[RMDB]
RNA sequence: GGGAACGACUCGAGUAGAGUCGAAAACGGUCAUCGACGGCUCGGGUGCAAUGUCGAAUCUGCCGGUGAACAUGAAGCUCAGCCAGCUGGCCAGCAGUGGUUUCCAGGAGUCUGCCCGCCAGUCGCAGAAGGAUGGGUCAUUCGUGACCCAUCCUUCAAAAGAAACAACAACAACAAC
Reactivity to DMS in 0.01 (KOAc 150mM, MgCl2 10mM, bicine 150mM(pH8.5), 24C), signal-to-noise 1, nucleotides 027 to 126: c080g000g010u000c120a100u010c080g000a100c000g040g010c130u020c110g000g000g010u010g020c090a260a180u000g000u030c000g000a050a000u000c020u000g090c050c040g000g040u000g060a050a110c140a090u010g000a210a270g010c020u040c030a090g000c050c050a130g020c040u000g000g000c040c050a090g000c090a090g020u030g030g010u000u000u000c000c040a120g000g000a120g000u000c010u030g000c000c000c220g000c020c110a030g010u000c110g020c080a240
Reactivity to 2A3 in 0.01 (KOAc 150mM, MgCl2 10mM, bicine 150mM(pH8.5), 24C), signal-to-noise 2, nucleotides 027 to 126: c050g000g070u080c010a040u010c020g090a080c100g020g030c010u030c070g020g000g000u100g070c120a030a070u130g060u130c000g000a040a080u030c030u070g040c010c040g000g070u130g060a120a040c010a030u150g100a090a020g000c010u020c090a010g010c030c000a020g010c010u030g010g000c020c010a000g010c010a000g070u060g090g030u030u100u020c000c010a010g010g020a010g080u020c020u070g000c050c010c000g040c020c010a040g000u040c030g000c090a020